[RMDB]
Structure probing data (2A3) for a 207-nucleotide construct.

RNA sequence: GGGAACGACUCGAGUAGAGUCGAAAAACAGUACCAGCUGCUAGGGCAGCUGGUACUGAACUUUCAUGGAGUUAAGAAACCACGUAAACAAAGCGGAACCGAAAAGCUAAACGAGUAGGAAGAAUAAAUAGGUACCACCACUUCGGUGGUGGUACAAGGUAUAUCGGUGGUUCGCCACCGAUAUACCAAAAGAAACAACAACAACAAC
Reactivity to 2A3 in 0.01 (KOAc 150mM, MgCl2 10mM, bicine 150mM(pH8.5), 24C), signal-to-noise 1, nucleotides 027 to 156: a000c000a000g000u000a000c000c000a000g070c010u080g000c090u070a140g170g300g100c020a000g040c010u000g000g000u000a000c000u000g000a000a000c000u000u080u050c050a030u100g010g000a030g070u040u090a100a020g050a110a100a000c020c020a000c050g000u110a000a150a070c070a060a040a000g000c010g010g010a060a060c000c000g010a020a020a020a020g090c070u230a020a090a070c000g000a010g000u000a010g130g040a010a000g020a010a060u160a130a010a030u170a130g110g000u000a000c000c000a000c000c000a000c000u090u040c130g070g000u000g000g000u000g000g020u010a000c000a000a000
Record summary:
The RNA was probed in 150 mM KOAc, 10 mM MgCl2 and 150 mM bicine (pH 8.5) at 24 C.